Overview:
An RNA of 207 nucleotides, treated with DMS and 2A3 and read out base by base.
RNA sequence: GGGAACGACUCGAGUAGAGUCGAAAAGAUAGCGUGUCCUCUGUGAGUUCACAGUCGGCAAGGUCAUCGCCCUGACGGGUGAUUGACCUGGUUGAUGAUUAGUCCCGCACCGCGUGAGGCAGGAAACUGAGCAGCGAAAAGGGGCAGCUGCGGACGGCCAAUGCAUCAGGUUCGCCUGAUGCAUUGGAAAAGAAACAACAACAACAAC
Reactivity to DMS in 0.01 (KOAc 150mM, MgCl2 10mM, bicine 150mM(pH8.5), 24C), signal-to-noise 1, nucleotides 027 to 156: g030a180u000a040g060c110g040u000g000u010c030c020u020c050u000g030u020g020a240g030u010u010c040a010c000a180g030u000c010g020g000c020a060a010g010g040u010c000a110u000c000g050c000c000c010u000g020a140c300g020g000g010u000g000a020u030u000g010a000c030c000u000g000g030u010u010g040a040u010g030a130u000u000a170g000u000c000c020c020g000c030a200c030c020g000c050g000u010g000a130g000g040c020a100g000g030a120a060a050c060u010g000a140g050c030a090g010c070g020a070a060a090a100g050g020g110g040c000a230g000c020u010g040c030g000g020a030c080g000g000
Reactivity to 2A3 in 0.01 (KOAc 150mM, MgCl2 10mM, bicine 150mM(pH8.5), 24C), signal-to-noise 2, nucleotides 027 to 156: g090a040u160a010g090c070g030u060g020u050c030c020u040c060u010g040u000g080a160g090u160u140c030a040c080a030g000u000c060g020g000c030a030a000g010g010u010c000a000u000c000g060c000c000c050u110g170a110c240g000g000g010u000g010a050u050u250g010a010c000c010u000g000g020u030u010g060a030u040g010a060u090u140a020g050u040c000c000c000g000c050a000c030c040g050c040g090u060g070a050g030g000c030a020g040g000a020a090a000c040u040g020a040g140c000a010g010c020g020a100a090a030a010g010g000g000g020c050a020g020c030u080g000c040g020g040a020c030g000g000
The DMS profile rests on 1,909 reads. The data come from the RNA Mapping Database (RMDB), library ARCHII. For DMS the reverse transcriptase was MarathonRT.